Source information:
The record gives the reactivity of an RNA of 207 nucleotides to 2A3.
[RMDB]
RNA sequence: GGGAACGACUCGAGUAGAGUCGAAAACGUACGUGGAGACACGUACGACGAGACUUCGGUCUCGAAUCGCAUGAACUCGCGCCAUGCGCGCGCGAGGCGUCGGUGGUCGGCGAGCCCACGGACGCAAAAACUCGCGCGUAAAUAAAUAGCGUGAGAAUAAUGGUAUGGUGUUCGCACCAUACCAUUAAAAAGAAACAACAACAACAAC
Reactivity to 2A3 in 0.01 (KOAc 150mM, MgCl2 10mM, bicine 150mM(pH8.5), 24C), signal-to-noise 2, nucleotides 027 to 156: c000g010u010a000c010g000u000g010g000a020g000a000c000a000c000g000u000a000c000g030a040c010g010a000g000a000c010u080u130c230g080g020u000c000u000c000g010a030a090u110c020g000c000a000u020g000a130a120c000u000c000g000c000g000c010c000a000u010g020c010g010c000g000c000g000c010g020a000g000g020c000g000u000c010g140g000u010g010g020u000c030g010g190c200g040a010g000c040c000c000a010c030g110g000a000c000g010c030a000a110a020a020a200c000u000c000g030c000g000c000g020u080a000a030a030u220a000a060a040u210a040g020c020g000u040g000a000g000a000a020
Background:
The RNA was probed in 150 mM KOAc, 10 mM MgCl2 and 150 mM bicine (pH 8.5) at 24 C.